[RMDB]
An RNA of 177 nucleotides, treated with 2A3 and DMS and read out base by base. The DMS profile rests on 1,313 reads. For DMS the reverse transcriptase was MarathonRT. It was measured as part of the RMDB library RFMREP. DMS (dimethyl sulfate) methylates the pairing face of unpaired adenines and cytosines.

RNA sequence: GGGAACGACUCGAGUAGAGUCGAAAACCGUCGUUAUCGAAGAUGGAGUCAGGCGCGAACAAGCGAGAGCGAGUGAGUGCAGGAUUCUAGAUGUGAUACAAGUCGUAACAAGGUAGCUGUAGGAGAACAUUCCAUCGUACUUCGGUACGAUGGAAUGAAAAGAAACAACAACAACAAC
Reactivity to 2A3 in 0.01 (KOAc 150mM, MgCl2 10mM, bicine 150mM(pH8.5), 24C), signal-to-noise 1, nucleotides 027 to 126: c020c000g100u070c100g040u040u060a040u060c020g040a090a000g020a040u100g020g000a020g010u020c030a020g010g000c010g030c030g000a010a020c000a040a010g020c010g010a070g000a020g080c020g010a010g020u000g010a030g000u010g000c000a010g000g000a040u000u030c000u010a010g020a090u050g060u100g030a030u010a070c050a130a040g070u060c030g020u080a090a000c050a080a060g080g000u040a040g080c030u080g030u130a060g000g120a040g010a060a010
Reactivity to DMS in 0.01 (KOAc 150mM, MgCl2 10mM, bicine 150mM(pH8.5), 24C), signal-to-noise 2, nucleotides 027 to 126: c000c000g000u010c200g030u000u000a020u000c010g000a090a100g000a220u000g010g000a030g050u000c030a030g040g020c010g030c010g000a210a020c010a060a300g000c020g030a060g010a210g010c010g000a300g020u000g000a260g020u000g000c000a000g000g000a030u000u000c000u040a010g000a120u000g010u010g000a070u000a040c030a110a150g000u000c040g000u010a020a040c050a070a060g010g010u000a030g020c010u010g000u000a060g010g010a080g000a110a220